[RMDB]
RNA sequence: GGGAACGACUCGAGUAGAGUCGAAAAACCCAUGUGCUACGGUAAGGGUCUCACUUUUAAGUGGGUUACGCUGGCUUAUCUCCGUCUGGGGCAAACGAGAAGAGCAUAAUCAGACUAGCUAGAUAGAGCCCUGACGCCGGGCAGACAUCUAUGCGAAGUACACUUUAUCCUUCGGGAUAAAGUGUACAAAAGAAACAACAACAACAAC
Reactivity to 2A3 in 0.01 (KOAc 150mM, MgCl2 10mM, bicine 150mM(pH8.5), 24C), signal-to-noise 4, nucleotides 027 to 156: a000c070c000c000a010u140g030u030g000c010u050a140c010g000g020u040a030a040g030g000g030u070c010u010c010a030c030u050u110u060u250a160a050g000u000g000g000g030u050u040a050c060g010c020u020g010g060c000u040u130a130u190c070u070c100c050g050u020c030u060g060g000g000g000c070a070a070a050c060g030a030g030a230a070g010a070g040c040a050u130a190a080u250c010a010g040a070c010u030a010g030c010u010a000g020a060u040a040g130a040g050c010c000c010u000g010a020c080g020c010c010g000g000g020c000a000g060a020c010a070u080c110u190a080u230g060c060g050a120a000
Reactivity to DMS in 0.01 (KOAc 150mM, MgCl2 10mM, bicine 150mM(pH8.5), 24C), signal-to-noise 1, nucleotides 027 to 156: a110c000c010c010a120u000g020u010g010c060u000a000c050g040g020u000a140a150g030g040g040u000c010u000c000a040c010u010u000u000u010a040a070g060u000g000g010g010u000u030a010c040g000c000u010g000g000c030u010u000a100u010c020u000c030c050g030u000c050u010g010g010g010g010c040a080a050a060c040g000a150g020a040a300g000a070g040c080a140u060a090a120u030c040a110g040a070c010u000a050g010c020u010a100g000a120u020a060g000a220g000c030c000c000u000g000a120c110g020c070c090g070g000g010c050a070g010a110c080a090u010c060u000a120u000g010c040g010a190a300
This 207-nucleotide RNA was probed chemically with 2A3 and DMS. The reactions ran in a buffer of 150 mM KOAc, 10 mM MgCl2 and 150 mM bicine (pH 8.5), at 24 C. The 2A3 profile rests on 2,052 reads. For 2A3 the reverse transcriptase was SuperScript II with manganese. For DMS the reverse transcriptase was MarathonRT.